[RMDB]
RNA sequence: GGGAACGACUCGAGUAGAGUCGAAAAGGGUGAUGCCGACACGGUCGAUGAAGGAGACGUGGAUGCGCAUGCGGGAACCUGGACUGCGGCGACGCUCGCCAUAAAGCCGUCGAUUGUACGGCCUGGAGAUACUCCUCGGAUUCGUCCGAGGAGUAUCAAAAGAAACAACAACAACAAC
Reactivity to 2A3 in 0.01 (KOAc 150mM, MgCl2 10mM, bicine 150mM(pH8.5), 24C), signal-to-noise 3, nucleotides 027 to 126: g050g000g020u050g030a050u100g000c010c000g020a030c040a030c060g100g060u050c030g050a190u170g150a110a030g120g010a080g020a040c030g000u030g010g080a130u120g050c080g000c060a010u100g030c030g020g070g000a050a040c010c000u020g050g060a020c030u070g030c030g020g000c020g020a020c010g010c090u030c000g040c020c000a060u170a100a180a010g000c010c000g000u020c010g110a300u090u240g040u100a000c010g000g010c000c000u020g000g020a090
Reactivity to DMS in 0.01 (KOAc 150mM, MgCl2 10mM, bicine 150mM(pH8.5), 24C), signal-to-noise 3, nucleotides 027 to 126: g020g000g010u000g020a070u010g010c010c030g030a090c080a080c030g010g000u000c020g000a140u020g000a100a090g010g000a260g000a070c030g010u000g000g020a070u000g040c080g000c030a060u000g030c060g020g000g000a120a090c070c030u000g010g010a090c070u010g000c060g010g020c050g010a070c080g000c060u000c070g000c040c020a080u010a070a090a150g010c010c000g000u000c010g000a160u000u020g010u000a010c000g000g010c000c030u000g010g000a300